[RMDB]
RNA sequence: GGGAACGACUCGAGUAGAGUCGAAAAGAUAUGGAGCGAGGAGACGCUUGGAUUUAUAGGCGAGAUGAGAGUAUGUCGGAAACGACAUACUCUGAGCCUAUUGUCAGCGUUGACUCGCUCCUAAGUCCAUAGAAGGUACCUUCGGGUACCUUCUAUGAAAAGAAACAACAACAACAAC
Reactivity to DMS in 0.01 (KOAc 150mM, MgCl2 10mM, bicine 150mM(pH8.5), 24C), signal-to-noise 3, nucleotides 027 to 126: g000a110u000a300u020g000g010a010g000c000g010a040g010g000a300g000a010c000g020c010u000u010g040g010a040u000u010u000a010u000a010g010g010c010g010a300g020a180u000g020a070g000a020g000u000a010u000g010u000c000g000g000a140a100a290c010g000a020c000a000u000a000c000u000c000u000g000a160g010c000c000u010a000u010u010g000u000c010a020g020c000g010u000u010g000a300c000u010c010g010c000u000c010c000u000a000a080g000u010c040